[RMDB]
RNA sequence: GGGAACGACUCGAGUAGAGUCGAAAAGAUGUCAUUCACUCAUGCUUCUAUGCUGGGUGACUCCUACCAUCAUCACAUUCUUCCAAUUCUCCCAGUAGGGUAUGCAGUAGUCAUGUAGGCAGAGCCUCACACACUAGCAGUUCGCUGCUAGUGUGUGAAAAGAAACAACAACAACAAC
Reactivity to 2A3 in 0.01 (KOAc 150mM, MgCl2 10mM, bicine 150mM(pH8.5), 24C), signal-to-noise 2, nucleotides 027 to 126: g030a010u110g060u100c030a110u070u010c000a000c000u030c000a020u250g010c030u210u200c050u220a070u300g010c000u010g020g000g000u010g010a010c020u000c000c010u020a070c010c010a040u040c010a000u050c020a020c020a080u080u030c020u060u000c020c040a060a110u080u000c020u000c040c010c010a000g070u070a020g000g010g030u040a040u060g020c010a010g020u100a020g030u030c020a060u130g050u090a020g010g000c030a020g020a040g070c010c000u030
Reactivity to DMS in 0.01 (KOAc 150mM, MgCl2 10mM, bicine 150mM(pH8.5), 24C), signal-to-noise 2, nucleotides 027 to 126: g010a060u000g000u000c100a110u010u000c010a030c030u000c010a010u010g010c050u010u010c270u000a070u010g030c140u000g000g010g020u000g000a050c180u020c030c040u000a060c130c040a080u000c020a060u010c050a070c090a090u010u000c000u000u020c010c060a070a110u020u000c080u000c030c010c060a090g000u010a040g000g010g020u000a060u000g020c030a070g000u000a090g000u000c090a090u000g020u000a010g020g010c040a040g000a100g000c070c050u000